[RMDB]
RNA sequence: GGGAACGACUCGAGUAGAGUCGAAAAGAAACCUCUCCAAAAUACUCGAAAGAGUAUUUCUGCGCAGAGUCAUGCCAGUACUGGACGAGGCUGGACUGAUCCCUGAUCACCAGUUUGGCUUCAGGCGGACCCUCAGCAGCUUCGGCUGCUGAGGGUCAAAAGAAACAACAACAACAAC
Reactivity to 2A3 in 0.01 (KOAc 150mM, MgCl2 10mM, bicine 150mM(pH8.5), 24C), signal-to-noise 1, nucleotides 027 to 126: g140a030a060a000c000c010u050c000u000c000c010a000a130a000a000u000a000c000u010c000g040a150a080a000g000a010g000u000a000u000u000u070c130u120g220c250g000c250a000g000a010g240u060c090a040u130g150c040c000a010g000u050a240c010u000g010g000a030c060g090a030g040g020c050u020g000g030a090c010u000g000a040u120c240c110c100u140g010a030u000c010a000c070c000a060g000u000u000u060g060g030c210u010u000c000a050g030g000c040g120
Chemical mapping of a 177-nucleotide RNA with 2A3. For 2A3 the reverse transcriptase was SuperScript II with manganese. High 2A3 reactivity points to a flexible backbone, as in loops and unpaired stretches. Source: RMDB library OK1LIB, as collected in RNAgym. The RNA was probed in 150 mM KOAc, 10 mM MgCl2 and 150 mM bicine (pH 8.5) at 24 C.